[RMDB]
RNA sequence: GGGAACGACUCGAGUAGAGUCGAAAAACGACCACUACGGCUUACGAGCCGAAGUGGUCGACGGUAGCUGGAUAAAACCGGGCCAUUGGCCAAACCCAGCCCAUCAACUGCAGCACCUGUCCCGCAAGUGAGGAACCUUGCUUCGGCAAGGUUCCAACCUAGAGAUAGACUUCGGUCUAUCUCUAGGAAAAGAAACAACAACAACAAC
Reactivity to 2A3 in 0.01 (KOAc 150mM, MgCl2 10mM, bicine 150mM(pH8.5), 24C), signal-to-noise 2, nucleotides 027 to 156: a000c000g000a000c000c000a000c000u100a020c000g000g030c010u100u030a050c280g150a010g000c000c000g020a000a000g000u010g000g020u000c000g000a000c000g000g000u010a010g000c020u040g050g050a130u070a180a130a040a040c050c040g010g000g000c030c040a300u150u220g040g000c060c020a060a020a050c020c000c010a000g020c000c000c030a060u140c020a020a060c050u090g020c000a010g020c020a020c010c000u040g080u060c040c000c010g040c080a130a080g080u110g120a120g030g000a000a020c000c000u030u000g010c000u060u110c190g050g000c000a000a000g000g000u000u000c000c000a000a000